[RMDB]
RNA sequence: GGGAACGACUCGAGUAGAGUCGAAAAGCGUAGAGAGUAUUAUUAAUGCUCUCAUGCCAUUGGCGCCCUUUUUAGAGGGGGUGACUUGUGAAACGGGGACAUCAAGUGAAUCCCCCUGCGAGCCGUCCCGAUACGGCUAGUUCGCUAGCCGUAUCGGAAAAGAAACAACAACAACAAC
Reactivity to DMS in 0.01 (KOAc 150mM, MgCl2 10mM, bicine 150mM(pH8.5), 24C), signal-to-noise 1, nucleotides 027 to 126: g000c050g000u000a130g030a000g010a000g020u010a000u000u010a200u010u010a060a080u000g010c000u010c000u000c000a080u000g010c010c030a280u000u010g000g010c050g020c030c030c000u000u020u010u020u020a160g000a030g020g000g000g010g040u000g010a010c000u000u000g020u010g030a070a120a220c140g000g000g010g000a280c090a090u000c040a010a070g000u000g000a180a180u000c000c010c030c000c000u030g010c050g020a070g010c040c000g000u000c020
Reactivity to 2A3 in 0.01 (KOAc 150mM, MgCl2 10mM, bicine 150mM(pH8.5), 24C), signal-to-noise 1, nucleotides 027 to 126: g020c040g020u090a040g010a000g000a000g030u040a040u250u080a180u060u170a220a020u060g010c010u000c010u000c010a000u020g000c000c000a220u030u120g030g040c040g000c000c020c020u010u090u050u000u180a230g020a050g000g000g000g000g000u060g040a030c010u010u010g000u020g030a210a150a100c130g000g000g050g020a020c020a030u090c010a070a030g040u010g100a160a080u100c000c050c000c020c010u060g000c020g030a010g000c000c020g000u000c020